[RMDB]
The data come from the RNA Mapping Database (RMDB), library OK3TST. Structure probing data (2A3) for a 207-nucleotide construct. 2A3 adducts were read by reverse transcription with SuperScript II with manganese.
RNA sequence: GGGAACGACUCGAGUAGAGUCGAAAAUACAGCUAUUGCCUAGGCUCAGGAGAUGCCCAGUAAAACUUCCUGGUGAAAAGCAACAGGUCUUUCAGAACUUUAGUUCUCUCUCUCCUACAGCAGAAGGUACCUGCUUGUGAAACACUAGGUGAUCCAACCAUUUAAUGCGGUUCGCCGCAUUAAAUGGAAAAGAAACAACAACAACAAC
Reactivity to 2A3 in 0.01 (KOAc 150mM, MgCl2 10mM, bicine 150mM(pH8.5), 24C), signal-to-noise 2, nucleotides 027 to 156: u150a010c040a010g000c050u150a100u270u170g080c000c010u040a000g000g030c010u050c120a140g000g040a050g020a060u080g040c000c020c020a020g100u190a030a100a050a080c050u080u050c000c000u000g020g000u010g030a130a110a000a000g000c000a000a020c000a000g000g000u000c000u000u120u100c040a040g080a110a060c020u170u170u260a070g010u150u020c050u000c020u030c000u000c000u020c090c030u060a100c050a090g010c040a010g020a010a000g040g000u040a050c000c000u060g000c100u000u000g000u010g040a140a090a000c010a000c010u010a000g010g000u050g010a030u010c030c010a000a030